[RMDB]
RNA sequence: GGGAACGACUCGAGUAGAGUCGAAAACUGGCCAGGAGCGAAUCCGAUGAUAAAGGACGUAGGCUAGAGGAUCGAAGACGAUUAGAGAGACCGUUGUAGUUCUAGCAGUAAACGAUGCCGAUACCGUUAUACUAACUCUCUUCGGAGAGUUAGUAUAAAAAGAAACAACAACAACAAC
Reactivity to 2A3 in 0.01 (KOAc 150mM, MgCl2 10mM, bicine 150mM(pH8.5), 24C), signal-to-noise 9, nucleotides 027 to 126: c010u010g020g000c010c010a080g050g050a070g050c030g030a050a090u030c010c040g050a080u140g040a040u120a090a080a030g030g000a000c050g030u060a040g050g020c000u000a010g010a020g040g030a060u100c020g020a050a020g050a040c030g020a040u100u230a060g030a010g000a000g020a130c020c030g020u030u090g030u050a040g010u030u000c020u020a020g000c030a020g040u140a010a080a040c060g030a040u090g050c020c020g020a010u060a040c010c010g020u010
Reactivity to DMS in 0.01 (KOAc 150mM, MgCl2 10mM, bicine 150mM(pH8.5), 24C), signal-to-noise 8, nucleotides 027 to 126: c040u010g000g010c030c030a110g020g010a090g020c040g000a120a090u010c020c020g010a110u020g020a140u020a070a110a170g000g010a070c050g010u010a080g010g010c020u010a020g000a090g000g010a070u010c030g010a110a150g010a020c030g010a060u020u010a060g000a060g010a100g010a050c080c110g010u020u010g020u010a090g000u020u000c020u000a050g010c060a060g000u020a050a050a080c040g000a050u010g010c010c020g020a110u010a060c050c030g000u010
Structure probing data (2A3 and DMS) for a 177-nucleotide construct. The reactions ran in a buffer of 150 mM KOAc, 10 mM MgCl2 and 150 mM bicine (pH 8.5), at 24 C. Values cover nucleotides 27 to 126.